[RMDB]
Source information
The data come from the RNA Mapping Database (RMDB), library OK3TST. Chemical mapping of a 207-nucleotide RNA with 2A3.

RNA sequence: GGGAACGACUCGAGUAGAGUCGAAAACAAAGAGCUGCUCGCUCAGGCUGUUCUGUGAAUAGUACACUGGGGUGUAGGAGAGGGCCCUGGUGAGACACGUGUCUGGGAGGCGGCAGUUGGUCGGGGUGGAGACGACCUCCGCCAGGUGGGAUGAGAACAUCCCUCGUAAAUUCGUUUACGAGGGAUGAAAAGAAACAACAACAACAAC
Reactivity to 2A3 in 0.01 (KOAc 150mM, MgCl2 10mM, bicine 150mM(pH8.5), 24C), signal-to-noise 5, nucleotides 027 to 156: c050a010a130a000g060a010g000c000u030g000c030u060c140g030c020u040c020a010g020g000c020u030g040u190u090c060u130g050u070g080a140a130u130a150g060u080a030c010a000c010u010g000g000g000g000u060g050u090a070g030g040a030g010a010g020g040g000c010c000c000u010g000g000u000g030a040g020a010c030a000c050g090u050g020u030c030u030g000g040g020a050g060g050c000g000g010c020a010g000u020u030g040g020u070c040g030g000g010g000u040g010g020a040g000a020c040g040a050c000c010u000c010c010g010c010c020a020g000g040u100g020g040g010a030u110g030a040g140a060a010
For 2A3 the reverse transcriptase was SuperScript II with manganese.
The RNA was probed in 150 mM KOAc, 10 mM MgCl2 and 150 mM bicine (pH 8.5) at 24 C.
Values are in units of 0.01, from 0 to 300, in steps of 10.